[RMDB]
RNA sequence: GGGAACGACUCGAGUAGAGUCGAAAACGGCAGUGGCAUCGGUAUGUGACCUAAGGUAUCUUCCCGCGACCUUUAAGCGUCCUCGCCGAUACGCUACUUCUCUAGGUCGCGUCUCGUUCUGCUAUGGUCUACUCAUCCUCUUCGGGGGAUGGGUAGAAAAAGAAACAACAACAACAAC
Reactivity to DMS in 0.01 (KOAc 150mM, MgCl2 10mM, bicine 150mM(pH8.5), 24C), signal-to-noise 9, nucleotides 027 to 126: c080g000g010c040a040g020u000g000g010c070a040u010c020g000g010u010a120u020g010u020g010a040c020c010u010a040a050g000g000u000a040u030c080u010u000c020c030c010g020c210g000a020c030c000u000u000u030a060a060g020c080g010u000c030c020u010c130g020c020c020g000a050u000a030c060g010c010u010a060c090u000u010c070u010c050u010a040g000g000u000c020g000c000g000u010c010u010c060g010u000u010c020u000g000c040u010a070u030g010g010
Reactivity to 2A3 in 0.01 (KOAc 150mM, MgCl2 10mM, bicine 150mM(pH8.5), 24C), signal-to-noise 9, nucleotides 027 to 126: c010g010g000c020a010g010u020g030g000c010a020u010c010g000g000u020a020u070g070u080g030a010c000c000u010a020a010g020g000u030a030u020c030u020u030c000c000c010g000c030g010a020c000c000u010u020u090a080a010g020c010g010u000c000c010u040c050g010c010c000g010a020u010a020c020g000c000u010a030c000u060u040c030u000c020u030a020g000g020u010c010g000c000g020u000c000u000c010g020u050u000c010u010g020c010u020a040u090g060g010